[RMDB]
RNA sequence: GGGAACGACUCGAGUAGAGUCGAAAACUAGACGCCGACCUGCGGGCACGUGAGGUCGAGGCCCAGAUGACCGACGACGAGCGAUUCUCACUGUUGGUCGGCCUGACCGGGGCCAGCGAUCUGUGGCGCCUCUAUGGGAGUUCGCUCCCAUAGAGGCAAAAGAAACAACAACAACAAC
Reactivity to 2A3 in 0.01 (KOAc 150mM, MgCl2 10mM, bicine 150mM(pH8.5), 24C), signal-to-noise 4, nucleotides 027 to 126: c010u010a000g020a030c010g060c030c010g010a060c020c010u070g000c010g010g070g050c090a080c170g050u040g300a050g010g000u010c010g040a040g010g020c020c000c000a050g050a210u140g010a020c010c000g000a020c010g030a000c030g030a010g030c170g160a230u300u060c040u040c070a090c030u080g030u000u000g100g000u000c020g000g000c000c000u060g010a050c030c050g010g020g010g020c000c010a020g000c010g070a200u010c000u040g040u070g060g020c040
Reactivity to DMS in 0.01 (KOAc 150mM, MgCl2 10mM, bicine 150mM(pH8.5), 24C), signal-to-noise 1, nucleotides 027 to 126: c000u040a000g050a020c060g030c000c020g060a020c040c020u030g010c000g020g030g050c160a050c020g020u000g030a040g020g000u000c020g030a040g000g000c000c020c250a260g000a210u040g060a000c000c000g010a000c020g000a020c130g040a060g000c300g000a230u010u110c020u000c010a110c080u050g000u030u000g000g050u040c000g000g000c000c040u000g010a130c270c140g060g000g030g060c050c000a230g000c040g000a050u000c050u060g000u000g050g000c080